[RMDB]
This 177-nucleotide RNA was probed chemically with DMS and 2A3. Values are in units of 0.01, from 0 to 300, in steps of 10. High 2A3 reactivity points to a flexible backbone, as in loops and unpaired stretches. For 2A3, 1,350 sequencing reads were counted. The reactions ran in a buffer of 150 mM KOAc, 10 mM MgCl2 and 150 mM bicine (pH 8.5), at 24 C. Reactivities are given for positions 27 through 126.
RNA sequence: GGGAACGACUCGAGUAGAGUCGAAAAAAGAGCUGGCCUGGCGUCGUCCGGCUCCCUCGACCGCACCGGAGCGCUAGAAAAGGUCCUCGGACUUUCUUCUAUCUCCGAAGCCGGUUUGAGGCCCGGCGAAUAGAGCAUGGUUCGCCAUGCUCUAUUCAAAAGAAACAACAACAACAAC
Reactivity to DMS in 0.01 (KOAc 150mM, MgCl2 10mM, bicine 150mM(pH8.5), 24C), signal-to-noise 2, nucleotides 027 to 126: a070a080g010a020g010c000u000g000g000c080c040u000g010g000c060g030u000c080g000u010c010c010g000g000c020u000c010c020c000u010c000g000a010c000c010g020c010a230c170c040g000g010a010g010c050g020c020u000a010g000a010a010a050a010g000g010u010c000c000u010c300g020g000a010c000u000u000u000c140u020u000c000u000a010u010c000u000c000c020g000a120a160g030c260c020g030g000u000u000u000g020a020g020g010c080c000c000g010g040c120
Reactivity to 2A3 in 0.01 (KOAc 150mM, MgCl2 10mM, bicine 150mM(pH8.5), 24C), signal-to-noise 1, nucleotides 027 to 126: a010a000g030a010g020c000u010g030g020c020c050u080g140g040c040g070u120c010g020u030c030c020g050g010c020u020c000c000c000u000c000g040a050c000c010g000c020a060c190c020g000g000a000g010c040g000c040u000a000g010a040a030a000a000g030g000u010c000c020u110c140g080g010a010c000u010u020u000c040u030u000c000u080a300u300c000u000c010c000g010a000a000g050c050c000g040g000u000u030u230g000a000g000g000c000c000c020g000g070c060